[RMDB]
RNA sequence: GGGAACGACUCGAGUAGAGUCGAAAAAAACAGAAUUUUGGAGGGCUAAUUAGAACACCACAGGAAUGCCCAGCUUUGACUGCCUCAUGGUGGGCAACUCCCUGGGGGUAGUGGCAUACUCAGUAGGCACCUUGCAUUAGUUCGCUAAUGCAAGGUGAAAAGAAACAACAACAACAAC
Reactivity to 2A3 in 0.01 (KOAc 150mM, MgCl2 10mM, bicine 150mM(pH8.5), 24C), signal-to-noise 2, nucleotides 027 to 126: a000a000a050c120a130g140a180a170u180u250u250u280g030g020a060g010g000g000c010u000a020a180u180u060a120g050a110a000c000a050c010c030a020c000a050g000g070a020a040u020g020c000c000c000a000g060c040u010u120u120g050a060c080u070g110c010c020u070c010a050u080g070g120u010g010g040g030c000a040a100c040u090c000c030c010u020g000g020g000g040g000u000a030g020u020g060g000c000a050u080a110c000u010c040a070g060u060a040g110g010
Reactivity to DMS in 0.01 (KOAc 150mM, MgCl2 10mM, bicine 150mM(pH8.5), 24C), signal-to-noise 3, nucleotides 027 to 126: a020a040a090c090a140g000a090a100u010u000u010u000g020g000a070g030g010g000c030u000a050a130u010u010a110g010a100a090c090a090c040c010a060c080a030g010g030a050a110u000g000c000c010c010a030g000c040u000u000u000g000a050c150u000g020c190c180u000c050a020u000g010g040u000g000g020g010c020a020a050c220u000c080c000c000u000g000g010g020g020g040u010a040g020u000g020g030c030a060u000a140c040u000c040a070g010u010a090g000g010
Conditions: 150 mM KOAc, 10 mM MgCl2 and 150 mM bicine (pH 8.5), 24 C.
The record gives the reactivity of an RNA of 177 nucleotides to 2A3 and DMS.
2A3 adducts were read by reverse transcription with SuperScript II with manganese.
Source: RMDB library OK2TRN, as collected in RNAgym.